[RMDB]
RNA sequence: GGGAACGACUCGAGUAGAGUCGAAAAUUAAAGGAGGAGGAGAAAUAUAGCGAGAGAUCGGUCCUCCCACGCGCGUCUCGCGCUGAUAAGAGGAAUAAGAGGAUGAUUAAUAGAUAGCGCCCAAAAACGUAUCACCUUUGUUCGCAAAGGUGAUACGAAAAGAAACAACAACAACAAC
Reactivity to 2A3 in 0.01 (KOAc 150mM, MgCl2 10mM, bicine 150mM(pH8.5), 24C), signal-to-noise 1, nucleotides 027 to 126: u100u040a100a020a000g070g010a010g000g000a040g060g000a000g040a060a180a020u300a040u070a030g040c030g000a040g000a000g030a030u050c040g010g010u050c020c000u000c000c000c000a010c060g070c000g030c010g140u160c060u090c080g010c000g000c000u030g040a070u030a140a070g010a030g000g020a040a080u100a110a170g030a010g050g010a030u070g040a020u010u250a110a080u060a110g080a080u080a000g000c010g040c010c000c000a020a090a000a000a000
Reactivity to DMS in 0.01 (KOAc 150mM, MgCl2 10mM, bicine 150mM(pH8.5), 24C), signal-to-noise 1, nucleotides 027 to 126: u000u020a040a130a080g060g000a120g000g000a040g000g000a080g010a040a070a060u000a060u010a080g020c020g010a030g000a050g010a050u000c070g000g000u000c030c070u000c010c020c040a060c190g000c060g000c090g000u010c100u010c090g030c010g000c000u000g000a070u000a100a040g000a070g020g000a100a050u010a020a120g010a080g000g000a040u000g000a050u010u000a050a040u000a070g000a090u000a030g030c100g000c010c010c050a030a040a040a060a120

Chemical mapping of a 177-nucleotide RNA with 2A3 and DMS. 2A3 adducts were read by reverse transcription with SuperScript II with manganese. The data come from the RNA Mapping Database (RMDB), library M2PK90. Reactivities are given for positions 27 through 126. The 2A3 profile rests on 696 reads. The DMS profile rests on 880 reads.